[RMDB]
RNA sequence: GGGAACGACUCGAGUAGAGUCGAAAAGUCACACAAGGAUUCUAAGUUGUACAUAGAUUAUGGCACCUACCAGAAUCUUUGUGUGGAGCUUAAAGAGAUAGGUGCCAUAAUCUAUGUCUUUAAGCAAGAUAGUAGUCGAGUUCGCUCGAUUGCUAUCAAAAGAAACAACAACAACAAC
Reactivity to 2A3 in 0.01 (KOAc 150mM, MgCl2 10mM, bicine 150mM(pH8.5), 24C), signal-to-noise 7, nucleotides 027 to 126: g010u020c000a000c000a000c010a030a010g020g010a040u070u040c030u210a110a150g050u100u090g040u090a050c010a040u020a020g060a040u020u050a030u080g000g000c000a010c000c010u070a090c030c080a020g040a030a010u000c000u010u000u000g010u000g000u000g000g010a010g010c010u120u190a060a090a000g130a030g060a130u080a090g000g010u010g000c040c010a040u070a030a000u010c000u000a000u000g020u000c000u000u050u030a050a030g060c030a100a040
Reactivity to DMS in 0.01 (KOAc 150mM, MgCl2 10mM, bicine 150mM(pH8.5), 24C), signal-to-noise 8, nucleotides 027 to 126: g010u020c000a010c010a020c030a020a020g000g000a070u030u020c060u010a120a140g010u010u000g000u020a050c010a000u000a010g010a020u000u000a040u000g000g010c000a000c010c000u000a030c150c080a130g010a050a040u000c000u010u000u000g000u000g010u000g010g010a090g020c090u020u030a050a050a070g000a090g010a100u000a010g000g010u000g010c010c020a010u010a000a000u000c000u000a010u000g000u000c030u000u010u010a040a080g020c220a100a110
Conditions: 150 mM KOAc, 10 mM MgCl2 and 150 mM bicine (pH 8.5), 24 C. Structure probing data (2A3 and DMS) for a 177-nucleotide construct. The DMS profile rests on 34,098 reads. DMS adducts were read by reverse transcription with MarathonRT.